[RMDB]
RNA sequence: GGGAACGACUCGAGUAGAGUCGAAAAGAUAUGGAUUAAACAUAUUGAUGACCUGUGGCGCAAGUCGGAAACGACAAUGCCACAGCAAGAUAUGUAAUCCUAAGUCAAACCGGCCUUCGGGCCGGAACGACACAAAUAUGUUCGCAUAUUUGUGUCGAAAAGAAACAACAACAACAAC
Reactivity to 2A3 in 0.01 (KOAc 150mM, MgCl2 10mM, bicine 150mM(pH8.5), 24C), signal-to-noise 5, nucleotides 027 to 126: g020a010u030a030u090g010g000a010u040u100a160a300a040c010a010u020a020u060u080g280a300u050g030a100c010c000u000g000u000g010g000c020g000c120a300a300g010u010c000g010g040a030a020a010c010g010a010c010a020a080u190g000c000c010a000c000a000g000c000a010a040g000a000u000a000u020g000u010a010a000u000c000c000u000a050a000g010u010c000a000a050a150c010c000g000g010c010c000u120u150c270g070g000g000c000c000g000g000a000a010
Reactivity to DMS in 0.01 (KOAc 150mM, MgCl2 10mM, bicine 150mM(pH8.5), 24C), signal-to-noise 4, nucleotides 027 to 126: g000a010u000a080u020g010g010a020u000u000a110a100a080c000a010u000a010u000u010g010a110u000g000a060c300c000u000g000u000g000g000c000g030c220a090a130g000u000c000g020g010a030a010a060c000g010a020c000a040a050u010g000c000c000a010c000a010g000c030a020a020g010a010u000a000u000g000u000a030a020u000c000c000u000a010a090g010u000c010a070a130a180c000c000g010g000c000c000u000u020c210g020g010g010c000c010g010g000a010a020